[RMDB]
RNA sequence: GGGAACGACUCGAGUAGAGUCGAAAAAGAGCUGCCAUGAACAUCAUUAGAUGAUCCUGAAGCCAGUGCUACAAACCACAGCGACUGCGCCGCAGCACUUGUACAGAUGCAGAUGCAGCUGCAGCACAUAAGCAAAACCAUUCGUGGUUUUGCUUAUAAAAGAAACAACAACAACAAC
Reactivity to 2A3 in 0.01 (KOAc 150mM, MgCl2 10mM, bicine 150mM(pH8.5), 24C), signal-to-noise 2, nucleotides 027 to 126: a000g060a000g000c010u020g010c050c020a030u070g030a030a020c000a020u030c030a040u080u260a120g010a040u060g020a040u050c010c010u030g020a080a000g020c030c010a010g000u020g020c010u050a050c050a100a200a050c030c010a050c020a060g000c030g140a060c050u030g040c050g000c110c030g060c000a010g000c020a020c000u040u030g050u030a050c010a080g080a180u050g000c020a000g040a170u100g080c020a030g030c020u050g000c020a020g020c050a040c000
Reactivity to DMS in 0.01 (KOAc 150mM, MgCl2 10mM, bicine 150mM(pH8.5), 24C), signal-to-noise 4, nucleotides 027 to 126: a110g000a060g020c010u000g030c070c060a050u000g000a030a080c010a010u000c010a160u010u000a100g010a040u000g010a070u000c010c060u010g010a230a100g010c020c030a040g020u010g010c020u000a110c110a060a080a170c160c070a070c110a070g010c030g010a040c040u010g000c060g040c070c110g010c020a020g000c030a060c060u000u000g010u000a120c150a040g010a110u000g000c000a050g000a080u000g010c050a040g020c010u000g010c010a030g010c080a070c170
An RNA of 177 nucleotides, treated with 2A3 and DMS and read out base by base. For 2A3 the reverse transcriptase was SuperScript II with manganese.